[RMDB]
Chemical mapping of a 170-nucleotide RNA with 2A3 and DMS. For DMS, 26,535 sequencing reads were counted. The RNA was probed in 150 mM KOAc, 10 mM MgCl2 and 150 mM bicine (pH 8.5) at 24 C.
RNA sequence: GGGAACGACUCGAGUAGAGUCGAAAAUUGUCAGUGUAGAGCUACAACCUCCUUGCAAAUUCUUGAUUGCGGGACCAAAAGGACCUGAAAUCCGAUAUCUCUAUUUUGUUAAAAAUCUUAACAACCUCCAACCACUACUUCGGUAGUGGUAAAAGAAACAACAACAACAAC
Reactivity to 2A3 in 0.01 (KOAc 150mM, MgCl2 10mM, bicine 150mM(pH8.5), 24C), signal-to-noise 9, nucleotides 027 to 129: u090u050g030u030c050a010g010u010g030u060a020g010a000g020c010u020a030c010a030a050c010c010u010c000c010u050u190g010c020a040a070a170u230u090c080u140u280g130a140u030u040g000c010g000g010g010a020c000c010a030a080a060a100g010g000a020c010c060u160g040a080a040a010u020c010c010g030a040u020a060u100c010u000c010u010a070u070u150u010u020g020u010u020a020a060a030a040a090u070c060u040u010a020a010c000a010a020c000c000u000c020c000a010
Reactivity to DMS in 0.01 (KOAc 150mM, MgCl2 10mM, bicine 150mM(pH8.5), 24C), signal-to-noise 5, nucleotides 027 to 129: u040u040g000u000c120a040g000u020g040u040a070g020a030g030c040u030a040c060a070a070c100c090u050c000c030u030u030g000c080a070a080a160u050u030c140u080u090g050a120u050u030g030c020g010g020g030a000c000c000a010a010a010a010g040g030a000c030c060u040g030a050a090a140u020c020c130g000a080u020a100u000c040u000c030u030a070u050u080u020u000g000u040u000a000a020a020a070a070u070c110u050u020a010a030c020a000a010c000c000u020c020c020a020